[RMDB]
RNA sequence: GGGAACGACUCGAGUAGAGUCGAAAAUGUGUCUGCCAGCACGCAUAUAGAUGUAUCCACGUGUCUGAUGAAUGCUCACAAUAUACAUGUCACAUAAAGAUCCACCCAUGUCCAGCCGAGCGCGGUGCAGAUACCUUUAGUUCGCUAAAGGUAUCUGAAAAGAAACAACAACAACAAC
Reactivity to 2A3 in 0.01 (KOAc 150mM, MgCl2 10mM, bicine 150mM(pH8.5), 24C), signal-to-noise 8, nucleotides 027 to 126: u110g020u010g010u020c020u040g050c020c010a000g010c020a010c030g040c060a020u170a010u060a140g130a100u090g050u080a070u060c040c020a040c070g040u050g040u030c030u030g060a090u070g040a110a040u080g010c020u040c030a060c040a090a070u110a010u040a140c060a070u100g060u050c020a020c010a070u160a090a140a000g050a020u000c020c000a040c020c020c000a040u070g030u000c020c020a020g010c010c020g040a030g040c080g000c020g030g030u040g010
Reactivity to DMS in 0.01 (KOAc 150mM, MgCl2 10mM, bicine 150mM(pH8.5), 24C), signal-to-noise 9, nucleotides 027 to 126: u000g020u000g010u000c030u000g020c040c070a090g010c030a050c220g010c050a080u000a080u010a060g010a080u010g020u000a060u010c080c070a070c120g010u000g010u000c030u000g010a080u000g010a080a050u000g000c050u000c050a080c090a090a070u000a080u010a070c060a060u000g010u010c040a040c090a060u000a050a070a120g000a090u000c040c050a080c030c020c020a070u010g010u010c030c030a100g010c040c030g000a090g000c090g010c060g010g010u000g010